Chemical mapping of a 177-nucleotide RNA with DMS and 2A3.
The data come from the RNA Mapping Database (RMDB), library M2PK50.
Conditions: 150 mM KOAc, 10 mM MgCl2 and 150 mM bicine (pH 8.5), 24 C.

RNA sequence: GGGAACGACUCGAGUAGAGUCGAAAACAUAAUGACUUCGGUCAUUAUGAAAUUAAGGCAGUCGAGUGCGCGCGGCACAGUCACGCGCUGACGCCACGACAAAAAUCGGGACCUUCGGGUCCCGAAACAUCUAUAUUAUCUUCGGAUAAUAUAGAUGAAAAGAAACAACAACAACAAC
Reactivity to DMS in 0.01 (KOAc 150mM, MgCl2 10mM, bicine 150mM(pH8.5), 24C), signal-to-noise 4, nucleotides 027 to 126: c010a010u010a000a000u000g010a010c000u000u010c220g030g010u000c000a000u000u000a000u000g000a080a090a090u000u010a060a150g010g000c030a080g020u000c000g000a120g030u010g010c020g020c020g010c050g000g010c040a110c190a130g030u010c040a030c020g000c010g000c000u010g000a020c020g010c000c000a060c110g000a030c080a050a070a040a100a100u000c000g010g000g010a040c010c000u000u010c200g020g010g010u000c000c000c000g010a000a020a090
Reactivity to 2A3 in 0.01 (KOAc 150mM, MgCl2 10mM, bicine 150mM(pH8.5), 24C), signal-to-noise 4, nucleotides 027 to 126: c000a000u020a000a000u000g010a000c000u040u030c250g080g000u000c000a010u000u000a000u010g000a020a000a020u260u120a090a060g060g000c110a060g040u020c030g110a040g170u090g020c000g000c010g000c010g070g000c050a070c060a300g060u080c010a020c040g000c000g000c030u030g000a020c010g000c000c020a070c020g080a020c050a010a150a020a000a030u040c010g000g010g000a000c000c000u020u070c210g100g000g000u010c020c010c000g000a000a000a000